[RMDB]
This 177-nucleotide RNA was probed chemically with 2A3 and DMS. For DMS the reverse transcriptase was MarathonRT.
RNA sequence: GGGAACGACUCGAGUAGAGUCGAAAAGAUAUGGAAUGAGUAGGGAGCAAUGUGGUCGGAAACGACCAGAUUGCUUUGAUCUACCAUUCCUAAGUCAAAACGACUGUUUUCUUCGGAAAACAGUCGACAAUCACCUGUACUUCGGUACAGGUGAUUGAAAAGAAACAACAACAACAAC
Reactivity to 2A3 in 0.01 (KOAc 150mM, MgCl2 10mM, bicine 150mM(pH8.5), 24C), signal-to-noise 1, nucleotides 027 to 126: g020a000u000a000u040g020g020a020a000u010g010a080g280u010a000g020g010g010a030g000c000a010a020u150g050u000g300g000u000c010g010g010a000a010a000c000g000a000c010c000a000g010a010u010u000g000c000u090u090u010g000a000u000c000u000a010c010c000a000u000u000c000c010u000a010a000g010u000c000a010a030a000a150c020g000a010c000u010g010u000u010u000u000c000u040u090c220g170g010a000a000a000a000c000a000g000u010c000g000a020
Reactivity to DMS in 0.01 (KOAc 150mM, MgCl2 10mM, bicine 150mM(pH8.5), 24C), signal-to-noise 1, nucleotides 027 to 126: g010a000u010a010u020g020g000a000a000u010g000a140g000u000a040g000g000g020a000g040c000a000a000u000g000u000g000g010u000c000g020g010a000a000a010c000g020a010c000c000a010g000a000u000u010g010c000u000u000u020g020a010u020c000u000a000c000c000a020u000u000c000c010u000a000a060g000u000c000a090a030a210a280c030g010a010c000u000g010u000u000u010u000c000u010u010c260g000g000a010a000a000a000c000a010g020u000c000g000a100
It was measured as part of the RMDB library TTRDES. Values are in units of 0.01, from 0 to 300, in steps of 10. Values cover nucleotides 27 to 126. The RNA was probed in 150 mM KOAc, 10 mM MgCl2 and 150 mM bicine (pH 8.5) at 24 C.